[RMDB]
RNA sequence: GGGAACGACUCGAGUAGAGUCGAAAAUGCGAAAGCGCCGUGGAGGCCCGCAGGGGUGUUGAUGUGCAAAUCGCUCCUCUGACCCCCGUCUAGGGGUGAAAGUCCAAUCGAGCCCGGGGAUAGCUGGGAAAUGAUAUAUUUUCGAAUAUAUCAUUUCAAAAGAAACAACAACAACAAC
Reactivity to 2A3 in 0.01 (KOAc 150mM, MgCl2 10mM, bicine 150mM(pH8.5), 24C), signal-to-noise 9, nucleotides 027 to 126: u140g010c020g050a100a040a050g060c030g000c020c000g020u060g030g090a070g020g040c020c010c000g020c020a020g010g010g000g020u040g040u180u300g060a050u050g090u130g070c060a030a120a060u030c010g000c010u010c000c000u010c010u010g040a060c000c010c000c000c010g050u090c140u210a090g000g000g020g000u030g020a080a030a000g020u020c030c010a020a050u070c030g020a010g020c000c020c010g020g000g010g010a090u100a070g020c040u060g040g060
Reactivity to DMS in 0.01 (KOAc 150mM, MgCl2 10mM, bicine 150mM(pH8.5), 24C), signal-to-noise 9, nucleotides 027 to 126: u030g010c030g000a090a100a140g000c070g010c050c020g020u010g000g010a120g010g010c020c040c050g010c070a030g000g000g000g010u000g000u020u020g020a030u000g010u030g020c200a060a120a070u000c020g000c010u000c010c010u000c030u010g000a230c110c010c010c020c070g010u030c130u050a100g000g010g010g010u010g000a070a070a120g010u010c050c050a070a090u010c060g000a120g000c010c010c010g000g000g000g000a090u010a060g010c040u010g000g010